[RMDB]
RNA sequence: GGGAACGACUCGAGUAGAGUCGAAAAGAUAUGGACUCCUGGUAGGCGAAGAACUCGGAAACGAGGGAGCCUGACCAGGGAGUCCUAAGUCAAAAGUCGAUGCCUAACUUCGGUUAGGCAUCGACAACUUUAGAUCUGAGUUCGCUCAGAUCUAAAGAAAAGAAACAACAACAACAAC
Reactivity to DMS in 0.01 (KOAc 150mM, MgCl2 10mM, bicine 150mM(pH8.5), 24C), signal-to-noise 2, nucleotides 027 to 126: g000a060u000a300u000g000g000a010c000u000c000c000u010g000g010u010a040g000g010c000g000a080a160g000a130a220c000u000c010g010g000a180a100a170c020g000a020g000g000g000a160g010c000c000u000g000a030c000c000a030g030g000g010a010g010u000c000c000u000a010a070g000u000c010a090a070a100a120g010u000c000g020a020u000g010c010c000u000a030a020c000u000u020c240g000g000u000u000a000g000g000c000a000u000c000g020a000c000a010a030